Chemical mapping of a 177-nucleotide RNA with 2A3 and DMS. Values are in units of 0.01, from 0 to 300, in steps of 10. High DMS reactivity at an A or C suggests that its Watson-Crick edge is free.

RNA sequence: GGGAACGACUCGAGUAGAGUCGAAAAUCUUGUUAGAUUUGGCAGGAUUGUUCAGAAUCUUUCUCCGCAAUGCCUAUGUGUACACUUCACAAGGGUUUGUGGUGGUCAAUGGCAAAGUUUCUACACUAUAUCUAGUAGGGUUCGCCCUACUAGAUAUAAAAGAAACAACAACAACAAC
Reactivity to 2A3 in 0.01 (KOAc 150mM, MgCl2 10mM, bicine 150mM(pH8.5), 24C), signal-to-noise 3, nucleotides 027 to 126: u020c000u000u020g030u040u030a110g050a300u140u120u150g020g000c030a000g010g060a050u020u040g040u120u230c060a040g070a100a060u010c020u050u100u030c010u010c010c000g010c020a020a020u100g090c000c010u070a130u100g040u000g010u040a060c140a080c180u110u040c020a000c000a030a090g040g020g020u000u000u030g000u020g010g030u040g020g030u050c050a060a050u030g070g000c040a130a040a040g020u040u030u000c010u010a020c040a000c120u010
Reactivity to DMS in 0.01 (KOAc 150mM, MgCl2 10mM, bicine 150mM(pH8.5), 24C), signal-to-noise 5, nucleotides 027 to 126: u000c010u000u010g020u010u000a090g010a240u010u010u010g010g020c040a050g010g000a040u000u000g010u000u010c140a140g010a120a070u000c040u000u010u000c040u000c000c030g000c040a040a030u000g030c000c000u000a180u010g020u000g000u010a130c240a150c210u010u020c020a010c030a050a300g000g000g020u000u000u010g010u000g010g010u000g000g020u000c100a010a080u010g010g010c060a070a050a080g010u000u000u000c010u000a080c220a090c190u000
Source: RMDB library 15KREP, as collected in RNAgym. 2A3 adducts were read by reverse transcription with SuperScript II with manganese.